[RMDB]
RNA sequence: GGGAACGACUCGAGUAGAGUCGAAAACGCUGCCGAAGCCCAGGCGGCCCCGAUUCAGGUUGGUGGCCGGCGCGGUCUGGACAUUUCCGCUGCUGCCAACAUCGUCAUUGACCACCUCCGGGCAGGAGUGUGCCUAACAUUUCGAUGUUAGGCACACAAAAGAAACAACAACAACAAC
Reactivity to DMS in 0.01 (KOAc 150mM, MgCl2 10mM, bicine 150mM(pH8.5), 24C), signal-to-noise 3, nucleotides 027 to 126: c180g000c010u000g030c010c010g020a060a120g000c020c010c030a240g000g010c020g020g000c010c030c020c000g000a060u000u000c230a110g010g020u000u000g000g040u000g020g020c010c270g010g000c100g050c030g000g020u010c060u000g030g000a090c300a170u000u010u000c010c010g020c010u010g000c040u000g050c020c000a070a070c130a060u000c080g010u000c050a090u010u010g020a100c050c010a110c050c000u010c070c050g000g000g030c100a130g010g000a160
Reactivity to 2A3 in 0.01 (KOAc 150mM, MgCl2 10mM, bicine 150mM(pH8.5), 24C), signal-to-noise 2, nucleotides 027 to 126: c020g000c010u030g000c000c010g070a190a030g010c000c040c000a010g030g000c000g000g010c000c010c000c010g030a030u170u160c070a050g110g000u020u020g020g000u040g040g000c050c060g060g020c030g010c010g010g040u030c100u110g070g020a050c070a270u210u220u020c010c000g000c010u070g000c050u160g000c000c000a090a070c030a120u090c020g070u020c000a070u030u090g040a050c000c010a010c010c030u040c040c070g010g020g000c020a020g050g070a100

Description
An RNA of 177 nucleotides, treated with DMS and 2A3 and read out base by base. For 2A3 the reverse transcriptase was SuperScript II with manganese. High 2A3 reactivity points to a flexible backbone, as in loops and unpaired stretches. For DMS, 2,045 sequencing reads were counted. Reactivities are given for positions 27 through 126. For DMS the reverse transcriptase was MarathonRT.